RNA sequence: GGGAACGACUCGAGUAGAGUCGAAAAUGGACACGCUAUGGGUAACAGCUCAUGCUUGUAGCACCUCUGCUAAGCGACAUACAGGCUUUGAGGACAAAUGCUGUGCUCUUCAUGCACACUUUUCAACAUGUGUCAGAUAUGGAGGGAAGAAAUGGAAUCGUAGUGCUAUAUUCGUAUAGCACUACGAAAAAGAAACAACAACAACAAC
Reactivity to 2A3 in 0.01 (KOAc 150mM, MgCl2 10mM, bicine 150mM(pH8.5), 24C), signal-to-noise 8, nucleotides 027 to 156: u100g030g010a030c030a010c060g030c060u090a050u070g030g020g030u100a190a040c020a100g030c000u030c070a040u100g010c020u020u060g030u030a020g020c010a050c020c030u050c050u090g060c060u070a090a030g040c030g060a070c040a090u210a040c040a050g070g030c000u060u100u130g050a050g020g030a030c060a020a060a010u140g010c120u020g030u020g020c010u020c020u160u120c070a070u170g000c020a000c000a000c010u090u060u130u170c100a090a070c020a120u110g010u010g030u040c030a010g010a050u070a030u090g040g010a030g040g020g000a040a040g050a040a120a040u150g050g050a030a070
Reactivity to DMS in 0.01 (KOAc 150mM, MgCl2 10mM, bicine 150mM(pH8.5), 24C), signal-to-noise 3, nucleotides 027 to 156: u010g030g010a100c030a090c120g020c050u000a060u010g000g000g000u000a050a200c080a110g010c060u000c030a120u000g010c030u010u010g010u000a050g010c050a120c070c030u020c040u000g030c100u000a110a090g010c030g030a090c080a190u000a080c010a080g030g030c000u000u000u000g000a110g010g010a080c060a040a060a060u000g000c030u010g000u000g000c010u000c110u000u000c130a110u000g030c040a050c000a050c180u000u000u010u010c050a070a070c160a050u010g010u000g030u000c050a070g010a150u000a060u000g000g010a110g020g000g010a100a050g020a060a080a100u000g000g010a070a210